About this RNA
This 177-nucleotide RNA was probed chemically with 2A3 and DMS. For 2A3 the reverse transcriptase was SuperScript II with manganese. DMS adducts were read by reverse transcription with MarathonRT. Reactivities are given for positions 27 through 126.
RNA sequence: GGGAACGACUCGAGUAGAGUCGAAAAUGUAUCAUUAGUUCGCGUUGAUUACGUCCCUGCCCUUUGUACACACCGCCCGUCGCGUCUAUUGAUUAGGUAGCAUCAUGAGUGAGGCAGAGGAGAAAUAGUCAUCAUACGAUUUCGAUCGUAUGAUGACAAAAGAAACAACAACAACAAC
Reactivity to 2A3 in 0.01 (KOAc 150mM, MgCl2 10mM, bicine 150mM(pH8.5), 24C), signal-to-noise 3, nucleotides 027 to 126: u140g050u060a050u090c030a070u130u060a040g170u060u050c060g000c050g070u010u090g040a070u060u110a020c030g060u030c000c000c000u040g010c000c010c000u040u080u060g030u090a060c060a000c020a040c030c020g010c000c000c030g050u050c020g010c000g010u020c060u030a090u050u100g090a070u120u070a020g110g000u060a060g030c010a050u040c020a040u120g040a030g070u030g020a010g040g030c030a030g000a040g060g000a040g040a000a060a030u070a020
Reactivity to DMS in 0.01 (KOAc 150mM, MgCl2 10mM, bicine 150mM(pH8.5), 24C), signal-to-noise 3, nucleotides 027 to 126: u020g010u010a020u010c040a040u010u020a120g010u010u010c050g000c170g000u000u000g000a080u030u010a060c040g010u010c010c000c000u000g010c050c020c010u010u020u000g000u010a070c110a120c070a130c050c040g000c050c050c050g000u010c040g000c040g030u000c020u020a040u010u010g000a110u010u010a040g000g030u000a050g000c080a110u000c060a040u000g000a090g000u010g000a120g010g020c020a050g010a050g000g010a060g000a040a070a080u040a110